[RMDB]
RNA sequence: GGGAACGACUCGAGUAGAGUCGAAAAGUGGCAUCAAGCCCAGAUAAUGUAACAUGCUGGUCCGUUGACUCGGACUAUCAGUUGAAAGGGUGGUACGACGUUGCUGGUAUACCAUCAACCGGCAUAGCUCCUAGUACGGGUUCGCCCGUACUAGGAGAAAAGAAACAACAACAACAAC
Reactivity to 2A3 in 0.01 (KOAc 150mM, MgCl2 10mM, bicine 150mM(pH8.5), 24C), signal-to-noise 2, nucleotides 027 to 126: g070u070g000g020c030a040u050c080a240a050g020c010c020c000a020g040a070u270a120a090u200g090u100a030a020c010a080u040g000c010u040g020g020u040c020c010g040u050u040g050a090c240u030c050g000g000a000c000u010a010u000c010a030g050u040u050g100a090a050a020g030g010g000u070g040g110u070a030c060g020a000c090g220u060u020g000c010u000g000g070u070a120u050a070c030c000a060u140c010a000a010c000c010g000g010c020a020u050a040g060
Reactivity to DMS in 0.01 (KOAc 150mM, MgCl2 10mM, bicine 150mM(pH8.5), 24C), signal-to-noise 3, nucleotides 027 to 126: g000u020g040g020c020a090u000c100a100a220g000c000c030c010a070g010a120u000a110a060u020g010u000a040a050c040a120u000g020c080u000g000g000u000c000c020g020u010u020g030a150c140u020c020g020g000a020c020u000a000u000c050a050g000u000u000g020a070a090a110g000g000g030u000g000g010u000a020c080g000a120c160g020u000u000g000c030u000g000g000u000a140u000a110c050c040a040u000c080a120a060c010c010g000g020c020a030u000a120g020